[RMDB]
RNA sequence: GGGAACGACUCGAGUAGAGUCGAAAAGUUAGGCGAGGCUCCUAUACAAACACAGGUUGCUGAUAUGACGACGUCGAGAGACGCCCAAGAUUAGGACAGGAUAUAUCGAACCAAGGUAUAUCCCCAUAAAACUCGGAACACUUCGGUGUUCCGAGAACCUCCAUAUAGUCUUCGGACUAUAUGGAGGAAAAGAAACAACAACAACAAC
Reactivity to DMS in 0.01 (KOAc 150mM, MgCl2 10mM, bicine 150mM(pH8.5), 24C), signal-to-noise 1, nucleotides 027 to 156: g000u010u010a090g000g000c040g010a250g000g010c040u010c030c020u000a140u040a270c130a070a100a120c070a020c050a140g030g000u010u000g010c030u000g030a110u000a120u000g000a140c010g000a010c000g010u010c000g000a300g010a300g000a040c010g000c000c000c050a120a110g000a150u000u000a080g030g010a210c150a030g030g000a030u000a010u010a010u010c000g010a010a300c150c150a110a140g020g000u010a010u000a000u010c010c000c010c020a110u000a010a040a030a060c000u000c000g020g010a070a020c000a020c000u000u000c260g050g000u000g000u000u010c000c000g000a010g010a020a020
Reactivity to 2A3 in 0.01 (KOAc 150mM, MgCl2 10mM, bicine 150mM(pH8.5), 24C), signal-to-noise 3, nucleotides 027 to 156: g040u040u050a020g050g060c100g030a030g050g000c020u020c000c000u080a070u080a160c140a060a190a010c080a000c030a070g070g050u190u090g040c020u080g020a060u020a020u230g010a010c050g000a010c010g020u010c000g000a020g000a010g000a030c000g050c000c020c020a040a040g080a130u150u210a040g020g030a030c100a140g030g000a010u000a000u000a010u020c020g030a090a100c120c040a180a050g010g000u000a000u000a000u000c000c020c000c000a060u180a060a180a040a050c000u000c000g000g020a000a000c000a000c010u060u090c120g040g000u000g010u000u000c000c000g000a000g000a000a000

An RNA of 207 nucleotides, treated with DMS and 2A3 and read out base by base.
For 2A3 the reverse transcriptase was SuperScript II with manganese.
Source: RMDB library M2RFPK, as collected in RNAgym.
For 2A3, 1,353 sequencing reads were counted.
The RNA was probed in 150 mM KOAc, 10 mM MgCl2 and 150 mM bicine (pH 8.5) at 24 C.
DMS (dimethyl sulfate) methylates the pairing face of unpaired adenines and cytosines.